The data come from the RNA Mapping Database (RMDB), library OK3TST.
The record gives the reactivity of an RNA of 207 nucleotides to 2A3 and DMS.
For DMS the reverse transcriptase was MarathonRT.
Values cover nucleotides 27 to 156.
The DMS profile rests on 4,084 reads.
For 2A3, 3,541 sequencing reads were counted.
The RNA was probed in 150 mM KOAc, 10 mM MgCl2 and 150 mM bicine (pH 8.5) at 24 C.

RNA sequence: GGGAACGACUCGAGUAGAGUCGAAAACAUGGAUGGGAUGCGUGAUCAUGACUGAGACAUUUUACGACGACCGCAACUCCCUUGAUACAGGCAAGCUGACAAUAUCAUACCUUGAUGUUUUUGGGAGAAAGAAAGAAUGGAUUUACACAAGAAGUGACAUUGUUCAUUCCUUCGGGAAUGAACAAUGAAAAGAAACAACAACAACAAC
Reactivity to 2A3 in 0.01 (KOAc 150mM, MgCl2 10mM, bicine 150mM(pH8.5), 24C), signal-to-noise 6, nucleotides 027 to 156: c030a030u050g080g000a020u040g040g030g000a040u090g050c020g030u090g050a110u040c040a070u090g080a080c050u060g050a030g050a050c080a160u100u100u100u110a070c080g020a020c040g030a040c040c030g040c040a050a130c020u010c000c010c000u010u050g020a020u050a050c020a000g160g010c020a030a040g040c030u030g030a040c060a090a090u090a020u190c040a020u070a150c020c040u050u040g010a050u030g070u020u010u030u080u080g030g030g010a050g030a010a070a010g080a040a030a000g070a050a020u070g000g030a010u060u080u210a050c080a000c000a020a070g080a130a050g050u040g040a010
Reactivity to DMS in 0.01 (KOAc 150mM, MgCl2 10mM, bicine 150mM(pH8.5), 24C), signal-to-noise 3, nucleotides 027 to 156: c060a150u010g020g000a150u000g000g030g030a080u020g020c060g010u010g010a100u010c080a110u000g020a140c050u000g020a110g000a080c060a070u010u010u000u010a080c080g010a100c060g020a050c060c010g000c010a120a120c070u010c010c000c000u000u000g000a110u000a060c050a050g020g000c020a010a060g030c010u000g010a060c050a040a060u000a300u010c030a110u000a080c070c090u000u030g020a050u000g040u020u000u000u000u000g000g000g020a060g010a080a040a070g030a070a070a050g010a060a100u000g010g000a150u000u000u000a050c070a050c060a060a120g010a050a120g020u000g020a140